[RMDB]
RNA sequence: GGGAACGACUCGAGUAGAGUCGAAAAACUAGUAUGUACACGAUGAGACUGCCGUGUCGUCUAGACUGUGGAUCCAAUAAUCUCAGAUCUGCGAGAUAUUGUCUCAAGAGUACGAGACAAGUACUCAGUGUUAUCACUACUUCGGUGGUGGUAACACAAAAGAAACAACAACAACAAC
Reactivity to DMS in 0.01 (KOAc 150mM, MgCl2 10mM, bicine 150mM(pH8.5), 24C), signal-to-noise 9, nucleotides 027 to 126: a090c010u000a030g010u030a040u020g010u020a020c020a050c020g010a100u020g000a080g000a060c080u020g000c060c010g020u000g010u000c010g010u010c040u010a020g000a150c060u000g010u000g000g000a040u010c070c120a080a090u040a080a070u020c060u000c060a070g000a070u010c040u000g020c060g010a050g000a060u010a050u010u010g010u000c000u000c000a070a060g000a080g020u010a020c040g010a120g000a060c160a040a050g010u010a050c010u000c010a160
Reactivity to 2A3 in 0.01 (KOAc 150mM, MgCl2 10mM, bicine 150mM(pH8.5), 24C), signal-to-noise 9, nucleotides 027 to 126: a000c010u010a010g070u100a050u070g080u070a010c020a000c020g050a060u110g020a020g060a060c050u070g080c050c000g010u010g010u010c000g010u000c020u020a020g020a070c030u020g000u010g030g010a010u000c020c030a040a050u180a080a060u030c050u010c060a040g020a150u010c010u040g040c030g020a030g010a040u080a050u070u060g010u000c000u000c010a030a020g040a010g060u040a020c040g010a000g030a060c040a050a020g020u010a010c000u000c020a010